An RNA of 177 nucleotides, treated with 2A3 and DMS and read out base by base. For DMS, 1,690 sequencing reads were counted.
[RMDB]
RNA sequence: GGGAACGACUCGAGUAGAGUCGAAAAACUAGCAUUAUUAGUACUCUUAAUUUCACUAUCAUUUUCAAUAGUUCUUGCAUCGCGAUUUUUGUUGCUAUCAGCUUUCAAAUGCAAGCUGUUAUAAAACAUGACGCAUAGGAUUCGUCCUAUGCGUCAUAAAAGAAACAACAACAACAAC
Reactivity to 2A3 in 0.01 (KOAc 150mM, MgCl2 10mM, bicine 150mM(pH8.5), 24C), signal-to-noise 4, nucleotides 027 to 126: a010c040u040a030g070c090a100u060u090a080u080u160a200g040u070a040c000u010c070u130u100a080a100u150u130u130c060a060c040u070a090u070c070a100u070u080u080u200c040a080a060u030a110g020u040u010c000u030u060g060c070a080u080c050g040c050g110a130u020u050u000u000u140g060u050u030g000c000u020a030u090c010a000g020c000u030u080u020c130a230a210a060u210g010c010a000a020g000c000u040g000u080u030a180u040a130a080a010a000c070
Reactivity to DMS in 0.01 (KOAc 150mM, MgCl2 10mM, bicine 150mM(pH8.5), 24C), signal-to-noise 1, nucleotides 027 to 126: a080c110u000a040g010c160a130u000u040a150u050u080a080g010u000a110c020u040c040u030u000a110a040u070u000u000c010a030c040u000a050u000c100a080u000u000u000u000c010a100a040u010a070g040u000u010c000u000u000g000c000a050u000c030g000c080g020a130u090u000u000u000u000g030u000u010g000c110u010a040u040c020a000g000c000u000u010u010c020a050a070a130u030g010c090a040a000g000c050u040g000u010u000a070u000a050a020a110a050c200
DMS adducts were read by reverse transcription with MarathonRT. The reactions ran in a buffer of 150 mM KOAc, 10 mM MgCl2 and 150 mM bicine (pH 8.5), at 24 C.